About this RNA:
Chemical mapping of a 177-nucleotide RNA with DMS and 2A3. 2A3 adducts were read by reverse transcription with SuperScript II with manganese. For 2A3, 18,688 sequencing reads were counted.
[RMDB]
RNA sequence: GGGAACGACUCGAGUAGAGUCGAAAAGAUAUGGAAAGGUCCCUCUGGAGAGGGUGUUCGGAAACGAACACACCUCUAUGAAGGAGGGAGCCUUUCCUAAGUCAAAAGGUAAGGUUCGCCUUACCAACAAAUAGGAAAGGUUCGCCUUUCCUAUUUGAAAAGAAACAACAACAACAAC
Reactivity to DMS in 0.01 (KOAc 150mM, MgCl2 10mM, bicine 150mM(pH8.5), 24C), signal-to-noise 8, nucleotides 027 to 126: g010a070u000a300u010g000g000a020a010a010g000g020u000c000c000c000u000c010u000g010g010a010g010a020g020g000g020u000g000u000u000c000g010g000a120a100a240c010g010a010a000c000a010c000a150c010c000u000c010u000a150u020g000a200a240g000g000a020g000g010g000a010g010c000c000u000u000u000c000c010u000a010a080g010u000c040a090a100a140a110g010g010u000a010a010g000g010u000u010c300g010c010c000u000u000a010c000c000a070a130
Reactivity to 2A3 in 0.01 (KOAc 150mM, MgCl2 10mM, bicine 150mM(pH8.5), 24C), signal-to-noise 4, nucleotides 027 to 126: g010a020u080a040u170g000g000a020a010a000g000g000u020c000c020c000u000c010u020g040g030a020g000a000g010g000g000u010g010u000u020c000g010g030a080a080a060c010g000a000a000c000a000c000a060c010c000u000c000u050a300u030g020a020a010g020g010a010g010g000g010a020g000c000c010u000u000u010c000c000u000a020a010g040u010c030a020a030a030a210g010g010u010a010a010g010g040u020u170c280g170c030c000u000u000a000c000c000a000a020